The record gives the reactivity of an RNA of 177 nucleotides to 2A3 and DMS. Reactivities are given for positions 27 through 126. It was measured as part of the RMDB library OK1LIB. DMS adducts were read by reverse transcription with MarathonRT.
[RMDB]
RNA sequence: GGGAACGACUCGAGUAGAGUCGAAAAUUUCGUCAGUGAGAGCUCUGACCGUCAGUUAUCUUCGAUGUGGCACUCCGUACUGACCAUAAAAACUGAAGAUAAGAUUCGGCUAACUCCGAUGCUCGGGAGUAAUGGUCAUGUUCGCAUGACCAUUACUAAAAGAAACAACAACAACAAC
Reactivity to 2A3 in 0.01 (KOAc 150mM, MgCl2 10mM, bicine 150mM(pH8.5), 24C), signal-to-noise 9, nucleotides 027 to 126: u120u120u060c030g030u020c020a040g020u030g130a210g010a010g100c020u010c030u070g040a050c030c020g040u080c110a090g040u040u040a020u040c010u020u020c020g090a080u090g010u040g050g000c020a010c060u060c050c060g050u100a080c050u060g170a300c020c020a030u170a060a180a020a010a010c120u160g010a020a010g010a020u040a030a020g050a070u100u080c000g010g000c010u020a080a070c010u000c020c020g030a030u070g020c040u020c000g010g000g030
Reactivity to DMS in 0.01 (KOAc 150mM, MgCl2 10mM, bicine 150mM(pH8.5), 24C), signal-to-noise 5, nucleotides 027 to 126: u010u010u000c060g010u020c040a090g010u000g010a130g000a080g000c030u020c030u000g020a100c010c030g020u010c190a070g010u010u020a030u000c010u000u000c050g020a110u010g020u000g000g000c040a050c070u000c120c070g000u020a080c180u020g000a180c010c070a050u010a050a090a080a080a090c120u020g020a020a050g000a040u000a050a040g000a190u020u020c010g030g000c050u010a080a120c050u000c050c020g000a110u010g020c060u000c010g000g000g010